Structure probing data (DMS and 2A3) for a 177-nucleotide construct. The DMS profile rests on 1,356 reads. For DMS the reverse transcriptase was MarathonRT.
RNA sequence: GGGAACGACUCGAGUAGAGUCGAAAAGAUAUGGAGUUGCUCGAUAAGACGCACUCGGAAACGAGUGGCGUCUUUUGACGAGCACUCCUAAGUCAAACACUCCACUCUGUUCGCAGAGUGGAGUGAACCUGUCUAUGACGUUCGCGUCAUAGACAGGAAAAGAAACAACAACAACAAC
Reactivity to DMS in 0.01 (KOAc 150mM, MgCl2 10mM, bicine 150mM(pH8.5), 24C), signal-to-noise 2, nucleotides 027 to 126: g030a020u000a300u010g020g010a020g000u020u030g010c000u000c000g000a180u010a010a020g010a020c000g000c000a030c010u020c020g000g000a040a140a120c000g010a010g020u000g000g020c000g020u000c000u000u000u030u020g010a160c120g010a020g010c010a000c000u010c000c000u000a000a010g000u010c000a120a090a260c010a020c010u000c000c000a030c000u000c000u010g020u000u020c230g020c000a010g000a010g020u000g020g020a010g020u010g000a010a050
Reactivity to 2A3 in 0.01 (KOAc 150mM, MgCl2 10mM, bicine 150mM(pH8.5), 24C), signal-to-noise 1, nucleotides 027 to 126: g020a010u010a040u160g030g010a040g040u300u180g130c000u000c000g020a060u060a160a040g020a010c010g000c000a000c000u000c020g010g010a100a080a000c000g040a000g000u020g290g070c060g000u090c050u010u000u050u040g010a010c020g000a000g000c000a000c000u030c000c000u000a030a020g000u000c030a050a120a020c000a010c000u000c000c020a000c000u000c000u010g100u210u120c300g060c190a020g010a000g000u000g000g040a020g000u000g000a000a000